[RMDB]
RNA sequence: GGGAACGACUCGAGUAGAGUCGAAAAAUGGGAAGACAAUUCAUUUGCUCAAUUUAUCUUCCAUAUACCAUCAAUUUUCACCUUGAUGAGCUGGAAGGUAACCAUGAAUCACAUCCAGCAAUUACUACUUUUACUAAUGAUUCGUCAUUAGUAAAAGAAAAGAAACAACAACAACAAC
Reactivity to 2A3 in 0.01 (KOAc 150mM, MgCl2 10mM, bicine 150mM(pH8.5), 24C), signal-to-noise 9, nucleotides 027 to 126: a000u050g020g000g040a080a060g060a070c040a030a030u090u080c030a130u070u080u120g030c030u040c080a090a110u040u030u030a020u010c000u010u000c000c010a010u050a010u020a190c010c010a000u010c000a010a020u050u090u160u270c090a090c030c020u010u000g000a010u000g000a010g020c010u000g000g000a020a000g010g000u000a010a010c020c010a030u040g070a030a040u100c040a040c010a110u020c020c010a020g050c040a110a110u110u060a090c040u020a030
Reactivity to DMS in 0.01 (KOAc 150mM, MgCl2 10mM, bicine 150mM(pH8.5), 24C), signal-to-noise 9, nucleotides 027 to 126: a060u000g000g000g010a080a090g010a090c140a050a030u000u000c090a090u000u000u000g020c150u010c110a080a090u010u000u000a030u010c000u000u000c000c000a020u010a130u000a250c050c000a020u000c020a020a010u000u000u010u020c240a100c300c300u000u000g000a010u000g000a060g020c090u000g010g000a030a030g010g010u000a010a060c220c050a030u010g010a060a070u000c100a090c160a110u000c030c020a090g010c140a070a070u010u010a080c120u000a120

Record summary
Structure probing data (2A3 and DMS) for a 177-nucleotide construct. Reactivities are given for positions 27 through 126. For DMS, 15,492 sequencing reads were counted. For DMS the reverse transcriptase was MarathonRT. As a SHAPE reagent, 2A3 marks flexible, mostly unpaired nucleotides at the ribose 2'-OH.